Chemical mapping of a 177-nucleotide RNA with DMS and 2A3. It was measured as part of the RMDB library OK1LIB. The RNA was probed in 150 mM KOAc, 10 mM MgCl2 and 150 mM bicine (pH 8.5) at 24 C.

RNA sequence: GGGAACGACUCGAGUAGAGUCGAAAAACGUGAGGAGCUGACGCCGCUGCAGGAGUUGCUGAAGAACCUCAUGGGCGACUACGCGAAGGAGCGGCUAGAGUGAGCAUCGAACUUCGAACGCAUAUUGCACCUACCUAUAUUUCGAUAUAGGUAGGUGAAAAGAAACAACAACAACAAC
Reactivity to DMS in 0.01 (KOAc 150mM, MgCl2 10mM, bicine 150mM(pH8.5), 24C), signal-to-noise 7, nucleotides 027 to 126: a080c050g010u020g000a080g000g000a090g010c030u010g000a180c180g000c010c020g040c020u010g010c070a100g000g000a060g020u010u010g010c010u000g000a140a100g010a070a120c080c040u020c070a090u010g000g000g020c020g000a060c030u010a060c070g000c080g010a070a100g010g000a060g000c020g000g020c010u010a060g000a120g000u030g000a070g000c050a060u000c030g000a070a100c040u000u000c010g020a110a080c070g000c080a050u010a090u040u030g010
Reactivity to 2A3 in 0.01 (KOAc 150mM, MgCl2 10mM, bicine 150mM(pH8.5), 24C), signal-to-noise 9, nucleotides 027 to 126: a010c070g030u060g010a040g030g020a050g030c030u020g020a020c040g000c010c010g010c030u100g030c030a050g000g110a040g040u040u020g000c020u060g050a120a070g040a130a110c010c030u100c060a080u090g030g050g020c010g020a030c020u170a060c040g060c040g140a150a050g050g050a050g020c010g010g000c020u020a010g020a050g110u120g050a030g030c030a040u090c040g050a040a060c010u070u040c030g050a100a030c030g020c060a060u050a120u150u270g020